[RMDB]
RNA sequence: GGGAACGACUCGAGUAGAGUCGAAAAGCCGCUAUAUAGCGGCGUAUCGCGCGGCGAUAGCGCGCCGCAUACGCGCGUAUCGCAUACGCCGCAUAGCGAUAGCGUAUGCGUAUGCGAUACGCAUACGCCACCUCAUUUAGUUCGCUAAAUGAGGUGGAAAAGAAACAACAACAACAAC
Reactivity to DMS in 0.01 (KOAc 150mM, MgCl2 10mM, bicine 150mM(pH8.5), 24C), signal-to-noise 4, nucleotides 027 to 126: g010c030c000g030c010u010a170u010a170u010a090g020c000g010g010c000g030u000a020u000c110g020c110g020c030g010g020c020g020a170u000a090g020c080g000c020g010c010c020g010c070a140u000a080c140g000c090g000c010g020u000a010u000c050g000c030a090u000a000c000g000c000c030g000c040a100u000a060g020c200g000a120u000a050g000c000g000u000a070u000g000c010g010u000a010u000g010c030g000a050u000a010c000g010c000a010u000a020c080g000
Reactivity to 2A3 in 0.01 (KOAc 150mM, MgCl2 10mM, bicine 150mM(pH8.5), 24C), signal-to-noise 5, nucleotides 027 to 126: g000c000c000g000c030u040a050u060a050u110a300g000c000g000g010c000g000u040a050u110c050g000c010g010c020g030g010c020g070a090u100a110g140c170g000c000g010c040c000g030c030a040u110a130c100g050c000g000c010g030u010a010u030c010g000c010a010u010a010c000g010c010c020g030c070a080u090a040g100c080g110a100u130a060g000c000g040u110a090u170g010c020g000u000a000u030g050c020g010a020u000a000c010g000c000a000u020a000c020g010
Chemical mapping of a 177-nucleotide RNA with DMS and 2A3. The RNA was probed in 150 mM KOAc, 10 mM MgCl2 and 150 mM bicine (pH 8.5) at 24 C. The 2A3 profile rests on 8,695 reads. The data come from the RNA Mapping Database (RMDB), library OK2TRN.